[RMDB]
Conditions: 150 mM KOAc, 10 mM MgCl2 and 150 mM bicine (pH 8.5), 24 C. The record gives the reactivity of an RNA of 177 nucleotides to 2A3. For 2A3 the reverse transcriptase was SuperScript II with manganese.
RNA sequence: GGGAACGACUCGAGUAGAGUCGAAAAUCGGGAGGUGCCUUCCGCGUCACGGAGUGCCGUGACCGGGGGUAACCCUGGCCGGGCACAGGCCCACCUGGGUUAGCCCGCCUGAGAAUGCAUACAUGCUAACCCGAACCGCAUUCGUGCGGUUCGGGUUAAAAGAAACAACAACAACAAC
Reactivity to 2A3 in 0.01 (KOAc 150mM, MgCl2 10mM, bicine 150mM(pH8.5), 24C), signal-to-noise 1, nucleotides 027 to 126: u120c000g010g000g000a000g000g000u120g010c050c000u300u150c020c000g000c050g000u050c000a000c000g000g010a270g250u300g300c040c000g000u000g000a000c000c000g000g000g000g000g000u000a030a000c000c000c000u000g030g020c010c050g000g000g040c000a070c060a160g160g190c000c000c000a040c000c090u110g000g000g000u000u120a000g010c000c000c090g000c010c000u000g000a000g020a050a060u090g070c010a070u050a230c040a020u230g130c010u000